RNA sequence: GGGAACGACUCGAGUAGAGUCGAAAAGGCUGGAUUGCACGCCCUUUGGGCAAGGGGUGGUUUUCUACUCCGCACCGUGCCCUGUUGUGGCAACCGCCUUUUCCCUGUCGUAAAUUUGUCCUGGGCAGAGCUGUCUGCCUGGAGGCAGGGGAGUCCGCCGAUCAAUAAACUUCGGUUUAUUGAUCGGAAAAGAAACAACAACAACAAC
Reactivity to 2A3 in 0.01 (KOAc 150mM, MgCl2 10mM, bicine 150mM(pH8.5), 24C), signal-to-noise 2, nucleotides 027 to 156: g050g000c160u190g060g040a300u070u090g010c040a050c100g060c050c040c030u090u150u060g000g010g010c020a030a020g020g000g000g000u010g010g000u040u100u060u010c040u080a140c090u020c010c000g010c010a040c010c020g010u020g000c000c000c000u050g030u050u110g050u070g030g000c010a000a000c010c000g000c010c040u000u000u000u010c000c000c000u010g000u000c040g010u100a040a130a300u210u190u220g050u050c000c000u060g010g020g000c010a010g000a040g040c240u180g100u300c000u010g000c000c000u000g010g000a010g000g000c010a000g000g010g000g000a020g060u040c000c020g000
Reactivity to DMS in 0.01 (KOAc 150mM, MgCl2 10mM, bicine 150mM(pH8.5), 24C), signal-to-noise 2, nucleotides 027 to 156: g010g020c000u030g100g010a150u000u000g010c050a060c090g000c050c070c040u000u010u020g030g010g030c030a050a040g000g000g000g100u000g030g010u010u000u020u000c100u000a170c080u000c030c010g000c030a080c010c010g000u010g010c000c000c000u010g010u000u000g050u010g030g000c020a050a050c010c020g000c010c000u020u000u000u000c000c010c010u000g030u010c020g010u000a080a060a220u000u000u010g010u000c040c030u000g020g020g020c010a040g000a070g000c120u000g010u020c010u010g000c000c000u000g000g000a300g010g000c000a020g000g000g010g000a140g000u000c010c030g010